An RNA of 177 nucleotides, treated with DMS and 2A3 and read out base by base.
[RMDB]
RNA sequence: GGGAACGACUCGAGUAGAGUCGAAAAUUAGCGAUGGCGAUACCUUGACCUGCCUACUUGAACGAACGCCACUUAAAAUUCGCCUACAACAUAUUGAUGCUCCAGAAUCUACCCAAGCAUUCGGCAAAUCAACUACUUGUUUCGACAAGUAGUUGAUAAAAGAAACAACAACAACAAC
Reactivity to DMS in 0.01 (KOAc 150mM, MgCl2 10mM, bicine 150mM(pH8.5), 24C), signal-to-noise 5, nucleotides 027 to 126: u020u010a080g010c090g010a120u000g010g010c040g020a100u010a050c070c050u000u010g010a070c040c030u000g020c030c020u010a080c060u000u000g000a080a100c120g000a070a120c100g000c020c010a040c100u030u010a050a050a100a160u000u010c040g010c040c010u000a050c090a030a060c070a060u000a060u000u010g000a070u010g000c020u000c040c040a070g000a070a080u000c030u000a150c040c020c020a080a110g000c090a080u000u000c070g020g000c140a050a050
Reactivity to 2A3 in 0.01 (KOAc 150mM, MgCl2 10mM, bicine 150mM(pH8.5), 24C), signal-to-noise 4, nucleotides 027 to 126: u080u030a030g050c050g100a090u070g040g020c020g010a040u050a120c010c000u010u070g060a080c000c030u040g010c020c010u070a100c040u040u080g050a100a020c060g000a050a010c020g050c020c020a070c040u090u090a020a040a090a140u080u040c040g010c010c000u050a050c030a140a010c030a060u150a060u110u150g070a060u070g000c010u030c030c010a020g040a050a030u000c020u050a100c010c010c000a000a020g000c020a070u030u090c030g050g000c030a040a110
For DMS, 3,849 sequencing reads were counted.
The RNA was probed in 150 mM KOAc, 10 mM MgCl2 and 150 mM bicine (pH 8.5) at 24 C.
For DMS the reverse transcriptase was MarathonRT.